Conditions: 150 mM KOAc, 10 mM MgCl2 and 150 mM bicine (pH 8.5), 24 C. This 207-nucleotide RNA was probed chemically with 2A3 and DMS. For 2A3 the reverse transcriptase was SuperScript II with manganese.

RNA sequence: GGGAACGACUCGAGUAGAGUCGAAAAUGAUUUGCCUGUUGCUGGAUCAUGUGAUUGAAAUUCUUUGAAUUUUUCUGUAAAUAGCCAAUUUAGCUUUUUCCCUUCCAGAGUAUUUGUUUCUUUGGGUGUGGAAGCAGCUGCUGCAGCCAGUGCAAGAAAUGACUAAAUCAUUCGUGAUUUAGUCAUUAAAAGAAACAACAACAACAAC
Reactivity to 2A3 in 0.01 (KOAc 150mM, MgCl2 10mM, bicine 150mM(pH8.5), 24C), signal-to-noise 3, nucleotides 027 to 156: u100g050a020u010u030u080g020c010c010u060g020u130u120g000c030u030g010g070a090u080c050a090u130g080u070g100a110u100u050g010a070a030a050u080u050c110u170u120u130g020a060a060u050u050u010u130u060c010u060g080u060a080a050a130u050a110g000c020c010a050a030u070u110u140a050g000c020u070u040u020u020u020c000c000c000u060u140c040c000a040g000a010g070u040a090u090u210u150g110u100u150u060c010u020u010u010g050g030g000u030g080u230g030g000a010a010g040c020a010g000c010u060g020c060u050g000c010a010g010c030c020a040g020u050g110c040a020a020g040a030
Reactivity to DMS in 0.01 (KOAc 150mM, MgCl2 10mM, bicine 150mM(pH8.5), 24C), signal-to-noise 3, nucleotides 027 to 156: u000g020a140u000u010u000g020c020c010u000g030u000u000g020c000u010g020g010a100u010c080a110u000g020u010g010a140u010u010g000a080a060a080u000u000c020u000u000u000g010a070a080u000u000u000u010u000c050u010g010u000a050a090a120u010a050g000c030c040a030a230u000u000u000a030g000c000u000u000u000u000u000c000c010c010u000u000c010c010a050g000a040g020u000a070u000u000u000g010u010u000u000c010u000u000u000g010g010g000u010g020u000g030g010a030a030g010c120a040g010c010u000g020c080u010g020c160a060g010c030c020a080g010u010g020c030a040a110g000a090
Source: RMDB library OK3TST, as collected in RNAgym.